Source information: Source: RMDB library OK3TST, as collected in RNAgym. The record gives the reactivity of an RNA of 207 nucleotides to 2A3 and DMS. For DMS the reverse transcriptase was MarathonRT.
RNA sequence: GGGAACGACUCGAGUAGAGUCGAAAAUGGGUUUUCAAUCCUAAAUUGCCUACAAUGUGGCAGUGAUUGCUAUUACAUGAGUAGAUUGCUAUAUGGGAGAGAGGUUAUAUUGAACAUAAGAAUAAUACUAUUGUUACAUAAAGAGCACAACUGGAAGUAUGAUAUGUUAGUUCGCUAACAUAUCAUAAAAAGAAACAACAACAACAAC
Reactivity to 2A3 in 0.01 (KOAc 150mM, MgCl2 10mM, bicine 150mM(pH8.5), 24C), signal-to-noise 9, nucleotides 027 to 156: u050g000g000g020u020u050u060u130c040a030a030u020c010c000u070a100a120a110u110u080g010c000c000u070a080c100a110a150u180g040u120g080g000c010a010g020u030g110a090u100u060g010c020u050a050u170u100a090c040a070u080g020a030g020u020a030g020a120u050u120g010c030u050a030u030a060u300g030g050g010a010g000a000g000a010g020g010u060u020a080u020a020u110u110g030a030a010c010a020u070a090a050g090a120a050u180a220a050u070a130c030u040a030u140u090g020u030u020a030c010a020u100a040a060a010g020a000g000c010a010c000a030a020c020u010g000g010a010a000g020
Reactivity to DMS in 0.01 (KOAc 150mM, MgCl2 10mM, bicine 150mM(pH8.5), 24C), signal-to-noise 6, nucleotides 027 to 156: u000g000g020g010u010u000u000u000c070a060a080u000c020c020u010a050a120a070u010u000g020c010c010u000a120c090a130a120u000g030u000g010g020c010a060g030u010g010a100u000u000g030c020u000a070u000u000a090c060a080u010g020a100g030u000a080g010a110u010u010g020c040u000a100u000a090u000g010g010g010a080g010a110g020a050g030g020u000u000a090u000a100u000u000g010a050a070c040a070u010a080a100g010a090a100u000a080a110u000a100c030u000a130u000u000g000u000u000a070c050a100u000a030a050a080g000a050g020c020a030c010a030a040c060u010g000g000a070a080g010
The reactions ran in a buffer of 150 mM KOAc, 10 mM MgCl2 and 150 mM bicine (pH 8.5), at 24 C. As a SHAPE reagent, 2A3 marks flexible, mostly unpaired nucleotides at the ribose 2'-OH.